[RMDB]
RNA sequence: GGGAACGACUCGAGUAGAGUCGAAAAUUACAUCUAUGAGCGCUUAUCCAAUUGUUUAUGACAAUCAACCAAUUGAAGUAUUGUAUCAACAUUUAUCAGAGAGCGAGCGUGUCAUUGUCAUGCAAGAAGGUCUCUCUGACUUCGGUCAGAGAGACCUAAAAGAAACAACAACAACAAC
Reactivity to 2A3 in 0.01 (KOAc 150mM, MgCl2 10mM, bicine 150mM(pH8.5), 24C), signal-to-noise 1, nucleotides 027 to 126: u200u000a200c000a070u000c000u160a130u000g020a000g000c000g000c000u000u000a000u010c000c020a300a130u090u000g110u000u000u000a020u000g090a080c000a000a000u040c000a000a040c040c000a160a260u090u300g020a090a000g070u300a110u000u000g000u020a000u070c020a000a000c000a000u300u300u300a160u180c020a000g290a020g020a000g030c020g160a000g070c000g000u000g180u020c090a090u000u130g000u000c000a070u070g000c000a090a090g090a110
Notes
Structure probing data (2A3) for a 177-nucleotide construct. It was measured as part of the RMDB library OK1LIB. The reactions ran in a buffer of 150 mM KOAc, 10 mM MgCl2 and 150 mM bicine (pH 8.5), at 24 C. For 2A3, 272 sequencing reads were counted.